[RMDB]
This 177-nucleotide RNA was probed chemically with DMS. High DMS reactivity at an A or C suggests that its Watson-Crick edge is free. The data come from the RNA Mapping Database (RMDB), library TTRINS. DMS adducts were read by reverse transcription with MarathonRT. The RNA was probed in 150 mM KOAc, 10 mM MgCl2 and 150 mM bicine (pH 8.5) at 24 C.
RNA sequence: GGGAACGACUCGAGUAGAGUCGAAAAGAUAUGGAGGCAAUUGGUAAUGUGGAUUAACGCAACAGCAUGUGUUUCGGAAACGAAACCAUGACAUGCGUGAUCCACAUUACCAAUUGCCUCCUAAGUCGAUGAGGUCUUAGUUCGCUAAGACCUCAUCAAAAGAAACAACAACAACAAC
Reactivity to DMS in 0.01 (KOAc 150mM, MgCl2 10mM, bicine 150mM(pH8.5), 24C), signal-to-noise 1, nucleotides 027 to 126: g020a060u000a300u000g000g010a020g030g000c000a030a000u020u000g020g000u000a010a000u020g010u010g010g030a020u010u010a030a030c010g010c000a050a090c300a260g020c000a000u000g020u020g000u000u000u000c010g000g000a080a140a300c010g000a000a000a000c000c010a000u000g010a060c120a100u000g020c000g010u000g000a030u000c000c020a010c000a020u000u000a000c000c010a000a000u000u000g020c010c010u000c000c000u010a020a070g020u000c090